An RNA of 177 nucleotides, treated with DMS and 2A3 and read out base by base.
The 2A3 profile rests on 1,534 reads.
It was measured as part of the RMDB libraries RFM100 and RFMREP.
[RMDB]
RNA sequence: GGGAACGACUCGAGUAGAGUCGAAAAGAGGAUUACUGGUGUGCGGCGUAUCCCCCAAGCGCCCCGCCAGGCAAGGUACCGUGGACCGCGUACCUUGAUUUACUCCUAAUGGUCUUAACCCGGUCUCACCAGGGGUACAGUUCGCUGUACCCCUGGUAAAAGAAACAACAACAACAAC
Reactivity to DMS in 0.01 (KOAc 150mM, MgCl2 10mM, bicine 150mM(pH8.5), 24C), signal-to-noise 2, nucleotides 027 to 126: g010a050g020g010a040u030u000a010c000u000g000g000u000g020u010g030c260g030g020c000g010u000a080u020c030c010c020c020c040a120a260g000c020g030c000c000c000c000g010c010c000a010g000g000c000a010a000g000g010u000a000c150c050g010u010g010g000a080c020c010g030c260g000u000a010c000c020u000u000g000a060u020u000u020a030c140u000c000c010u000a050a100u000g010g000u000c010u000u020a170a210c040c000c000g000g000u000c090u010c100
Reactivity to 2A3 in 0.01 (KOAc 150mM, MgCl2 10mM, bicine 150mM(pH8.5), 24C), signal-to-noise 1, nucleotides 027 to 126: g170a020g040g020a070u150u110a140c000u000g000g000u030g060u130g080c190g010g000c000g010u170a300u300c000c000c000c000c000a060a040g010c000g000c010c000c000c010g000c000c000a010g000g010c010a000a000g000g030u010a000c070c000g010u120g040g040a020c060c000g020c030g010u000a010c000c000u010u010g010a000u020u030u070a100c020u010c000c000u110a170a130u160g030g000u010c000u080u090a070a070c000c000c000g000g060u020c050u010c020